Conditions: 150 mM KOAc, 10 mM MgCl2 and 150 mM bicine (pH 8.5), 24 C. An RNA of 177 nucleotides, treated with DMS and 2A3 and read out base by base. Values cover nucleotides 27 to 126.

[RMDB]
RNA sequence: GGGAACGACUCGAGUAGAGUCGAAAACAGUGAGACUUCGGUCUCACUGAAAUGACUAUGCACCAUGACGAGGACGAAGAUGCGGAGGUCGACGAGGAACAAAAACAGCAAGGUUCGCCUUGCUGAAGAUUUCGAAAUUGUUCGCAAUUUCGAAAUCAAAAGAAACAACAACAACAAC
Reactivity to DMS in 0.01 (KOAc 150mM, MgCl2 10mM, bicine 150mM(pH8.5), 24C), signal-to-noise 3, nucleotides 027 to 126: c000a030g000u000g010a000g000a010c000u000u020c200g060g020u000c000u000c000a000c000u000g000a020a050a090u010g010a080c090u000a080u000g020c090a120c030c030a080u000g020a080c070g000a080g010g010a090c070g010a060a090g010a070u000g010c050g000g000a050g000g010u000c030g010a100c110g010a090g010g010a060a040c130a050a060a050a080a100c010a000g010c010a000a000g010g000u000u010c250g020c000c000u000u000g010c000u000g000a020a070
Reactivity to 2A3 in 0.01 (KOAc 150mM, MgCl2 10mM, bicine 150mM(pH8.5), 24C), signal-to-noise 1, nucleotides 027 to 126: c010a000g010u000g010a000g000a000c020u060u130c290g080g000u010c000u010c010a000c000u000g000a000a010a010u110g030a020c030u070a050u180g000c000a030c030c010a060u110g020a000c050g010a030g030g010a010c030g040a060a040g030a050u090g040c060g020g020a040g010g040u050c010g000a030c040g020a050g020g040a050a050c020a050a070a030a010a020c000a000g000c000a000a000g010g000u020u040c070g090c030c000u000u010g000c000u000g000a000a010